[RMDB]
RNA sequence: GGGAACGACUCGAGUAGAGUCGAAAACCGGAAGAAGACAUACGUUUUUGUGCCUAGUUCAUGAUGCAUUGUUGAAGGAAGGGCCGGACUUUUUGAAUGUAAGCAUCAAACCCUCACCCUGACAAAAUCACCGCUAAAUGUUCGCAUUUAGCGGUGAAAAAGAAACAACAACAACAAC
Reactivity to 2A3 in 0.01 (KOAc 150mM, MgCl2 10mM, bicine 150mM(pH8.5), 24C), signal-to-noise 2, nucleotides 027 to 126: c000c000g040g020a090a030g040a050a000g060a040c000a090u210a050c150g070u010u010u000u100u140g050u090g090c010c030u020a090g010u020u090c110a060u140g010a050u130g030c020a050u070u200g050u120u080g090a060a020g060g020a030a050g000g030g010c020c000g040g000a030c000u000u020u010u020u120g070a050a010u040g030u210a020a070g010c000a020u010c000a010a040a060c000c000c000u010c050a000c050c000c010u020g000a010c010a000a070a010a070
Reactivity to DMS in 0.01 (KOAc 150mM, MgCl2 10mM, bicine 150mM(pH8.5), 24C), signal-to-noise 2, nucleotides 027 to 126: c000c000g010g000a020a130g070a090a050g000a090c120a050u010a050c090g030u010u000u000u000u000g030u010g010c080c010u000a040g000u010u010c050a110u000g010a080u030g000c050a140u010u030g100u010u000g000a210a050g000g020a050a080g040g000g040c070c100g000g000a070c020u000u030u000u050u000g000a030a090u050g020u020a070a080g010c030a020u000c030a020a070a020c040c000c020u000c110a110c050c030c000u000g000a120c040a040a100a070a130